[RMDB]
Record summary
The record gives the reactivity of an RNA of 207 nucleotides to DMS and 2A3. For DMS the reverse transcriptase was MarathonRT. For 2A3, 3,119 sequencing reads were counted. Conditions: 150 mM KOAc, 10 mM MgCl2 and 150 mM bicine (pH 8.5), 24 C.

RNA sequence: GGGAACGACUCGAGUAGAGUCGAAAACUCGGCAAAUUUGGUGACUGCCAAUAUUCAAUCCCUCAAUAUAGUCACGAGUAACACCCAGAUACUUAACGUGUCUGUCGGAGCAAAUAUCACAACCCUCACAGUAAGUACUUUGGCAAACCUGGUCACCCCACUUACGCUAAUUCGUUAGCGUAAGUGGAAAAGAAACAACAACAACAAC
Reactivity to DMS in 0.01 (KOAc 150mM, MgCl2 10mM, bicine 150mM(pH8.5), 24C), signal-to-noise 1, nucleotides 027 to 156: c050u020c030g000g020c000a090a050a080u010u000u000g000g030u000g000a050c020u010g000c030c010a070a180u010a180u000u000c080a110a170u000c010c010c010u000c020a050a090u000a150u020a170g000u000c040a090c060g010a100g000u000a050a100c080a110c160c000c010a100g000a090u000a020c030u010u000a110a130c150g000u000g000u000c010u000g000u000c020g000g000a180g050c030a050a060a190u000a120u000c090a110c080a080a120c060c000c010u000c010a100c030a050g030u000a050a110g020u000a010c090u010u000u000g020g050c000a090a060a050c020c020u000g020g010u000c050a080c050c040
Reactivity to 2A3 in 0.01 (KOAc 150mM, MgCl2 10mM, bicine 150mM(pH8.5), 24C), signal-to-noise 6, nucleotides 027 to 156: c020u030c050g000g010c100a060a130a190u130u060u080g020g000u010g020a040c050u070g030c010c020a030a060u140a140u140u160c040a060a150u050c000c050c010u080c070a140a080u130a040u060a140g070u070c030a030c090g000a020g020u050a050a030c030a060c050c010c000a010g010a020u010a010c010u130u100a230a060c120g010u000g010u000c010u020g090u120c070g010g010a040g010c040a040a080a080u200a110u190c050a030c030a110a120c040c010c000u050c020a050c010a050g040u050a080a010g020u030a070c060u040u090u050g000g000c000a040a040a130c020c030u030g030g010u030c000a030c010c000
Record summary
For DMS, 2,002 sequencing reads were counted. For 2A3 the reverse transcriptase was SuperScript II with manganese.